Chemical mapping of a 207-nucleotide RNA with DMS and 2A3. It was measured as part of the RMDB library OK3TST. For 2A3 the reverse transcriptase was SuperScript II with manganese.
RNA sequence: GGGAACGACUCGAGUAGAGUCGAAAAACAAUCUCUGGGUGGCGUGUAGGAAGGGUCGCCUAGGCAUUAAGUACAGAUACUUCCUGAAGAUCAUGGAAGGCUAUGGUAGCCCAGAGGAAAAGAAAGAACAUUGGAAAUGUCUGGACACAACAAGUGAUACCACUUUUACGUUCGCGUAAAAGUGGUAAAAAGAAACAACAACAACAAC
Reactivity to DMS in 0.01 (KOAc 150mM, MgCl2 10mM, bicine 150mM(pH8.5), 24C), signal-to-noise 2, nucleotides 027 to 156: a040c080a150a090u000c010u000c010u010g020g030g060u000g000g010c050g070u020g030u000a120g000g000a100a050g000g000g050u000c040g040c010c030u010a020g020g080c080a090u000u020a040a150g030u020a130c040a250g020a110u010a030c020u010u000c000c000u000g010a110a100g000a130u000c050a090u000g010g030a070a050g010g010c060u000a060u000g000g000u000a160g040c000c000c050a030g010a040g000g020a040a030a040a120g020a150a030a080g000a010a040c070a100u000u030g000g000a070a130a070u000g000u010c010u000g010g030a060c030a090c060a040a090c120a040a100g040u010g000a290
Reactivity to 2A3 in 0.01 (KOAc 150mM, MgCl2 10mM, bicine 150mM(pH8.5), 24C), signal-to-noise 7, nucleotides 027 to 156: a010c030a020a060u040c010u010c000u000g000g010g000u020g050g020c080g030u110g070u080a030g060g020a030a040g030g020g000u040c020g020c010c020u020a030g030g010c020a030u110u080a100a040g050u060a070c030a030g120a070u090a120c010u020u020c000c000u040g030a160a070g060a180u180c070a050u150g030g020a030a030g000g010c020u090a040u100g060g020u050a020g000c000c000c000a010g000a030g010g010a030a080a000a000g050a010a070a000g060a070a010c030a090u100u150g040g050a080a050a030u060g010u020c030u050g020g040a030c040a000c000a140a040c040a140a030g120u110g140a040
The RNA was probed in 150 mM KOAc, 10 mM MgCl2 and 150 mM bicine (pH 8.5) at 24 C. For 2A3, 6,125 sequencing reads were counted.